[RMDB]
Notes:
The data come from the RNA Mapping Database (RMDB), library OK1LIB. This 177-nucleotide RNA was probed chemically with 2A3. The 2A3 profile rests on 649 reads. 2A3 adducts were read by reverse transcription with SuperScript II with manganese.
RNA sequence: GGGAACGACUCGAGUAGAGUCGAAAACAUCUACGCGGCGGACCGGACGUAAUGGCGGUUUAGUAGCCACCGAAGGCGGCGUGGUCAGAGCUCCUAUUCUCUACUCUGGCUGGUCGCAACCGGAUGACGCAUUCCACCCUUUCGAGGGUGGAAUGCGAAAAGAAACAACAACAACAAC
Reactivity to 2A3 in 0.01 (KOAc 150mM, MgCl2 10mM, bicine 150mM(pH8.5), 24C), signal-to-noise 1, nucleotides 027 to 126: c000a050u070c030u050a050c050g020c080g040g050c000g020g070a000c050c040g070g010a010c070g080u120a000a260u140g000g020c000g040g020u000u000u130a100g020u090a000g060c000c000a090c000c000g030a020a040g130g060c020g000g000c000g180u130g000g010u010c010a000g000a000g000c070u110c090c000u070a070u170u040c050u000c000u010a040c010u070c000u000g000g000c050u050g020g000u050c000g000c010a020a020c010c010g000g000a000u160g120a050